RNA sequence: GGGAACGACUCGAGUAGAGUCGAAAAGGGGUCUCCGUAGAGCGGACCCAGCUUGGAUUUAUGUGGCUGAAGCCUCCACGGCCACAUUGUCAGCUGCUAACGCUUGAAGGAGACGGAGGCACCCAAAUGAGAGCUACGAUUCGUCGUAGCUCUCAAAGAAUACUUUGACGUUCGCGUCAAAGUAUUCAAAAGAAACAACAACAACAAC
Reactivity to DMS in 0.01 (KOAc 150mM, MgCl2 10mM, bicine 150mM(pH8.5), 24C), signal-to-noise 1, nucleotides 027 to 156: g000g040g060g010u000c000u000c030c010g030u010a300g010a030g040c010g010g010a250c190c230c030a000g000c000u000u030g040g020a160u020u000u000a010u010g100u020g010g000c000u000g000a040a160g040c020c020u000c010c030a300c050g050g020c000c010a000c010a000u000u000g070u000c020a050g000c000u000g000c010u000a110a300c040g010c020u010u010g010a190a250g010g020a150g010a010c000g010g030a070g060g000c040a160c000c000c020a060a080a150u000g010a030g000a000g050c000u000a010c000g000a090u000u000c300g010u000c000g020u000a010g110c000u000c000u010c000a000a010a080
Reactivity to 2A3 in 0.01 (KOAc 150mM, MgCl2 10mM, bicine 150mM(pH8.5), 24C), signal-to-noise 3, nucleotides 027 to 156: g050g000g010g010u010c010u010c000c020g050u070a020g000a000g040c020g020g010a020c000c030c000a000g010c020u150u180g240g010a100u200u290u110a010u080g020u010g000g000c010u020g010a140a060g040c000c020u020c030c030a060c030g000g000c010c010a000c000a000u000u020g010u010c020a000g010c000u000g000c050u070a090a020c000g000c000u010u040g050a040a010g020g000a000g020a000c000g000g010a000g010g000c020a160c030c020c030a010a070a070u100g000a000g000a000g000c000u010a000c000g020a010u040u090c220g040u000c000g010u140a000g020c000u000c020u000c000a000a000a010